[RMDB]
RNA sequence: GGGAACGACUCGAGUAGAGUCGAAAACAGUGGUUACCCACCAGAAUAAUCGGGCGUGGCCUGAUCGACUUGUCGCUAGUAUGCGCCCAAUUGAUGCCCGCUACAGCAAGCCAAUGGUCGGUGCAGGGCGACGGGCCAUUUUCGAAUGGCCCGUCGCAAAAGAAACAACAACAACAAC
Reactivity to 2A3 in 0.01 (KOAc 150mM, MgCl2 10mM, bicine 150mM(pH8.5), 24C), signal-to-noise 1, nucleotides 027 to 126: c000a090g220u100g140g000u030u120a020c000c020c030a090c040c040a000g060a100a100u240a070a110u040c070g000g000g000c200g100u150g230g070c020c020u040g030a090u020c040g070a070c000u000u220g060u080c000g000c000u000a030g000u000a000u080g040c000g120c010c010c010a000a140u080u210g000a060u080g000c000c000c000g020c080u100a000c050a010g070c080a010a010g040c000c000a070a150u070g010g000u000c000g000g010u050g000c000a000g010g010